RNA sequence: GGGAACGACUCGAGUAGAGUCGAAAAGCAAGAUGCUUCGGCAUCUUGCAGUCGUAGCGCGAUCGAGAGAAUUACAGCUAUGUCGAACGAGGAAGAGCGCGCACAUCAUCCCUUUCGAGGGAUGAAAUUCGCGUACUUCGUUCGCGAAGUACGCGAAAAAAGAAACAACAACAACAAC
Reactivity to DMS in 0.01 (KOAc 150mM, MgCl2 10mM, bicine 150mM(pH8.5), 24C), signal-to-noise 2, nucleotides 027 to 126: g020c010a000a030g030a000u000g020c010u000u000c210g000g020c000a010u000c000u000u000g020c000a040g000u000c020g020u000a090g040c020g020c080g020a010u000c000g020a110g030a300g010a060a110u020u020a070c280a090g000c120u010a080u000g010u010c020g000a210a190c010g010a010g020g000a120a090g010a140g010c000g020c000g020c120a040c180a100u020c000a000u000c000c000c000u000u010u010c210g020a020g010g000g000a010u000g000a000a070a150
Reactivity to 2A3 in 0.01 (KOAc 150mM, MgCl2 10mM, bicine 150mM(pH8.5), 24C), signal-to-noise 1, nucleotides 027 to 126: g020c000a020a010g000a000u000g000c000u040u150c300g050g000c000a020u010c000u000u000g000c030a010g020u000c080g050u120a020g000c020g000c000g010a000u020c000g000a010g020a000g000a090a000u210u110a160c070a080g040c050u160a090u290g090u060c020g000a020a030c000g000a000g050g000a020a020g070a060g210c000g010c030g000c000a000c020a050u000c000a010u000c000c040c000u000u090u010c210g120a020g040g000g010a010u000g020a010a020a010